[RMDB]
RNA sequence: GGGAACGACUCGAGUAGAGUCGAAAAGAUAUGGAAUGAUUGUUGAGAAGCUCGGAAACGAGGCUUCAAUGAUGCAACCAUUCCUAAGUCAAAGCAGGUGCUAUGAGUUCGCUCAUAGCACCUGCAAGAGUCCUUUAAUGUUCGCAUUAAAGGACUCAAAAGAAACAACAACAACAAC
Reactivity to 2A3 in 0.01 (KOAc 150mM, MgCl2 10mM, bicine 150mM(pH8.5), 24C), signal-to-noise 2, nucleotides 027 to 126: g020a020u080a030u210g000g000a000a000u010g000a020u040u010g020u020u040g010a040g000a050a000g000c010u000c010g010g050a020a050a040c010g030a030g110g060c020u000u000c010a000a270u120g030a030u110g010c010a000a000c000c000a010u000u000c000c010u010a080a020g050u040c050a000a070a130g000c000a010g050g000u000g000c010u010a000u010g010a000g030u100u280c300g100c180u000c000a000u000a000g000c000a000c000c010u000g000c020a010a000
Reactivity to DMS in 0.01 (KOAc 150mM, MgCl2 10mM, bicine 150mM(pH8.5), 24C), signal-to-noise 2, nucleotides 027 to 126: g000a020u000a300u010g000g000a020a010u000g010a030u000u000g010u010u000g000a110g000a010a000g030c000u000c000g000g000a100a090a150c010g010a010g000g000c000u000u010c000a090a170u010g000a110u000g000c000a000a000c010c000a000u000u000c000c010u010a020a090g010u000c020a060a100a190g020c010a010g000g050u000g000c000u000a000u010g000a020g000u010u020c300g010c000u000c000a000u010a000g010c000a000c000c000u000g010c000a000a030